[RMDB]
RNA sequence: GGGAACGACUCGAGUAGAGUCGAAAAAGAUUUUCGGCGGUUGCUGACGGGGGCGAAUUAGGAUCGACGAGUGCAAUAAAGACGCGGUUGCCGAUCGGUAUGGAUGCCACCGUGACGGCUCAAUCACAAAAGCAAAAAUACUUCGGUAUUUUUGCAACGUUCUAGUAUCCUUCGGGAUACUAGAACGAAAAGAAACAACAACAACAAC
Reactivity to 2A3 in 0.01 (KOAc 150mM, MgCl2 10mM, bicine 150mM(pH8.5), 24C), signal-to-noise 1, nucleotides 027 to 156: a010g050a010u060u070u060u070c040g050g020c000g030g050u110u110g000c070u070g000a040c000g030g030g000g000g020c020g010a030a040u090u040a090g100g000a000u030c010g010a020c000g040a170g210u010g040c000a000a090u110a250a070a040g100a020c050g000c060g060g070u010u060g000c030c000g020a030u010c070g040g040u130a060u070g050g070a020u150g020c030c000a000c040c000g020u010g030a040c010g060g010c010u030c060a030a000u100c030a030c070a070a110a000a030g000c000a030a030a030a030a000u000a000c000u000u090c200g100g000u010a010u040u000u000u030u020g040c000a010a010
This 207-nucleotide RNA was probed chemically with 2A3. Reactivities are rounded to 0.1 and cut off at 0 and 3. Conditions: 150 mM KOAc, 10 mM MgCl2 and 150 mM bicine (pH 8.5), 24 C. It was measured as part of the RMDB library M2RFPK.